RNA sequence: GGGAACGACUCGAGUAGAGUCGAAAAUCCAUUCACCCACUGCUCGAGAAUGUCUUCUCUUCCCCCGCGAUUCUUCCUCGAUUCGGAUCGGCUCAUCUCGACAAGAGGCGGCGGUCCUCAGUGCUCUUACUCUUUUCUGUAAAGAGGAAACUGCUGGCUAGCGAUUAUAGUUCGCUAUAAUCGCUAGAAAAGAAACAACAACAACAAC
Reactivity to DMS in 0.01 (KOAc 150mM, MgCl2 10mM, bicine 150mM(pH8.5), 24C), signal-to-noise 1, nucleotides 027 to 156: u010c080c060a230u010u000c060a160c000c000c000a200c090u000g000c060u010c020g000a050g010a150a120u000g000u010c040u000u010c040u000c030u010u000c010c010c000c020c030g040c080g040a150u010u010c050u030u020c070c000u010c080g000a130u000u000c140g040g000a100u000c030g000g000c060u010c030a140u000c020u010c050g000a130c140a130a170g000a100g010g030c090g030g040c060g000g000u000c020c010u000c060a090g030u000g000c080u010c010u000u020a100c020u000c020u010u000u010u010c110u000g010u020a000a080a060g030a050g040g000a120a040a050c070u000g000c010u010g000g010
Reactivity to 2A3 in 0.01 (KOAc 150mM, MgCl2 10mM, bicine 150mM(pH8.5), 24C), signal-to-noise 2, nucleotides 027 to 156: u040c030c010a030u060u010c020a030c000c020c040a070c050u000g000c020u030c020g050a030g070a270a300u170g080u100c120u070u020c030u080c030u050u060c020c000c000c000c000g000c000g030a050u080u040c030u060u020c030c000u040c020g110a160u180u050c030g020g000a020u010c020g120g000c020u040c090a090u020c030u020c000g110a140c090a190a090g000a000g010g010c020g050g040c000g000g020u030c000c000u010c010a000g010u000g040c010u030c020u110u130a100c000u060c040u050u180u120u050c040u150g100u200a030a090a000g020a000g010g000a010a010a050c050u060g010c000u020g000g010